[RMDB]
An RNA of 177 nucleotides, treated with DMS and 2A3 and read out base by base.
For 2A3 the reverse transcriptase was SuperScript II with manganese.
Conditions: 150 mM KOAc, 10 mM MgCl2 and 150 mM bicine (pH 8.5), 24 C.
The DMS profile rests on 1,106 reads.
RNA sequence: GGGAACGACUCGAGUAGAGUCGAAAACCCGCCAAAGCUAAAUUGAUAAAGAAAACGAGGAGAAGAAGGAACUCACCUGUCGUCGUCGACGAAGGCCGGUGAGAAAGGAGCUGUCAGCACUAAGCCGCAUGUCAAAACUGUUCGCAGUUUUGACAUGAAAAGAAACAACAACAACAAC
Reactivity to DMS in 0.01 (KOAc 150mM, MgCl2 10mM, bicine 150mM(pH8.5), 24C), signal-to-noise 2, nucleotides 027 to 126: c000c020c020g020c130c130a060a120a060g010c030u010a050a070a070u000u010g010a100u000a020a070a100g010a070a030a070a060c000g010a040g000g000a040g000a040a080g000a040a050g000g010a060a180c030u000c000a040c010c020u000g040u000c010g020u000c000g030u010c230g030a150c040g030a040a010g000g020c040c060g010g000u000g000a040g020a030a010a060g000g000a040g010c080u000g000u020c070a020g030c030a010c060u020a070a130g000c030c060g020
Reactivity to 2A3 in 0.01 (KOAc 150mM, MgCl2 10mM, bicine 150mM(pH8.5), 24C), signal-to-noise 1, nucleotides 027 to 126: c040c010c000g000c010c050a140a080a020g020c020u190a140a130a040u230u110g060a160u100a220a160a070g140a040a130a030a010c110g010a020g050g000a050g010a020a000g030a010a010g040g010a020a050c000u000c000a000c020c000u000g000u000c010g000u020c000g090u090c090g100a300c030g000a040a010g030g010c020c010g020g000u000g010a010g000a010a010a010g000g010a040g000c050u000g070u050c020a020g050c020a010c030u020a070a000g090c030c010g030